The record gives the reactivity of an RNA of 177 nucleotides to 2A3 and DMS. 2A3 adducts were read by reverse transcription with SuperScript II with manganese. Conditions: 150 mM KOAc, 10 mM MgCl2 and 150 mM bicine (pH 8.5), 24 C.
[RMDB]
RNA sequence: GGGAACGACUCGAGUAGAGUCGAAAAGAUCUUGUUGACCUUCCCGUGCGCCAGCAGGUAGACGGCGUCCGCCCGGUUGCCCGCCUCGGCGAUCACGUCACCGGGCUCGAACUCCUCCUGGCGGAACUAAUACCGAACCAUUCGUGGUUCGGUAUUAAAAAGAAACAACAACAACAAC
Reactivity to 2A3 in 0.01 (KOAc 150mM, MgCl2 10mM, bicine 150mM(pH8.5), 24C), signal-to-noise 4, nucleotides 027 to 126: g030a040u080c050u130u120g050u060u090g080a090c010c050u040u030c000c000c000g010u080g020c000g010c000c010a030g000c020a020g020g050u240a010g050a110c050g080g090c040g080u050c060c030g010c000c000c000g020g000u020u030g010c000c020c000g010c010c020u110c070g100g000c010g010a060u100c060a040c110g050u040c020a000c000c000g020g010g020c040u030c040g020a040a030c030u010c010c000u010c000c010u000g010g000c000g010g000a030a000c020
Reactivity to DMS in 0.01 (KOAc 150mM, MgCl2 10mM, bicine 150mM(pH8.5), 24C), signal-to-noise 4, nucleotides 027 to 126: g000a050u000c050u000u010g000u000u000g000a300c110c050u000u000c010c000c020g010u030g010c010g000c000c010a030g010c280a020g000g020u010a050g020a160c090g000g000c090g000u030c150c150g020c020c000c010g000g020u010u000g040c010c090c020g000c040c040u020c300g010g010c010g010a030u010c150a150c180g000u010c060a040c020c000g000g000g000c010u020c050g000a110a120c020u010c000c000u010c160c000u000g010g000c020g000g020a070a100c090